[RMDB]
RNA sequence: GGGAACGACUCGAGUAGAGUCGAAAAGAUAUGGAUAGUGGACAUGAUUGGUGGUCGGAAACGACCGAGAGAUCAACAGCCAUCAUCCUAAGUCAAACCCCGGGAUGUGUUCGCACAUCCCGGGGAACACAAUGGAAAUCUUCGGAUUUCCAUUGUGAAAAGAAACAACAACAACAAC
Reactivity to 2A3 in 0.01 (KOAc 150mM, MgCl2 10mM, bicine 150mM(pH8.5), 24C), signal-to-noise 2, nucleotides 027 to 126: g010a030u040a020u090g020g000a000u020a050g040u010g010g030a060c090a240u130g050a140u050u040g080g100u190g050g000u040c010g000g030a110a080a020c010g020a020c000c010g030a040g010a000g030a080u010c010a030a090c030a100g010c000c000a010u070c010a000u010c030c010u020a140a050g030u020c020a050a020a300c020c030c020c000g010g010g010a000u010g030u020g020u140u160c300g000c180a000c000a010u030c000c030c000g000g000g000g000a000a010
Reactivity to DMS in 0.01 (KOAc 150mM, MgCl2 10mM, bicine 150mM(pH8.5), 24C), signal-to-noise 3, nucleotides 027 to 126: g010a050u000a300u010g010g010a010u010a040g030u000g000g000a030c090a220u010g010a020u000u010g010g000u020g010g010u000c000g000g000a100a080a210c030g020a000c000c000g020a080g020a210g010a010u000c010a050a090c220a150g010c000c010a000u010c060a010u000c010c000u000a070a100g010u000c030a070a100a250c000c000c000c000g000g000g000a010u000g030u000g000u000u010c250g010c000a020c010a000u010c000c000c000g010g000g000g000a000a030